[RMDB]
RNA sequence: GGGAACGACUCGAGUAGAGUCGAAAAUUCAGGUUAGUGAUGGUUGACUCAAAACGGUUCUGAGACGCACCCAAUACGCUGCGCUGUGUAUCAACCGCUUUCAGCGCUUUAUCGAUAUCAGCCAACGGAUUCUGAGUGGUUUCGACCACUCAGAAUCAAAAGAAACAACAACAACAAC
Reactivity to DMS in 0.01 (KOAc 150mM, MgCl2 10mM, bicine 150mM(pH8.5), 24C), signal-to-noise 2, nucleotides 027 to 126: u010u000c050a030g020g010u000u010a080g020u000g010a070u010g010g000u010u000g000a030c130u000c080a090a050a120a100c150g000g010u000u010c050u020g010a040g030a110c060g010c230a090c040c020c020a070a110u010a180c050g070c040u000g010c150g010c030u010g000u030g000u000a020u010c060a070a120c300c000g020c030u000u030u010c160a060g030c020g000c150u010u010u000a040u000c160g000a020u000a010u010c050a000g010c000c000a010a020c100g020
Reactivity to 2A3 in 0.01 (KOAc 150mM, MgCl2 10mM, bicine 150mM(pH8.5), 24C), signal-to-noise 1, nucleotides 027 to 126: u020u000c000a010g000g080u100u200a060g000u120g080a070u010g010g110u060u100g040a080c030u030c080a020a020a060a040c050g020g060u120u070c030u060g010a010g000a030c020g020c050a070c000c000c000a000a030u140a020c040g000c010u040g010c040g080c070u020g040u000g000u130a030u020c020a030a040c010c000g040c060u120u130u150c100a040g010c000g000c110u000u030u030a060u040c030g000a010u000a010u060c000a000g000c000c010a040a000c060g030
This 177-nucleotide RNA was probed chemically with DMS and 2A3. DMS adducts were read by reverse transcription with MarathonRT. For 2A3 the reverse transcriptase was SuperScript II with manganese. The RNA was probed in 150 mM KOAc, 10 mM MgCl2 and 150 mM bicine (pH 8.5) at 24 C. It was measured as part of the RMDB library OK2TST.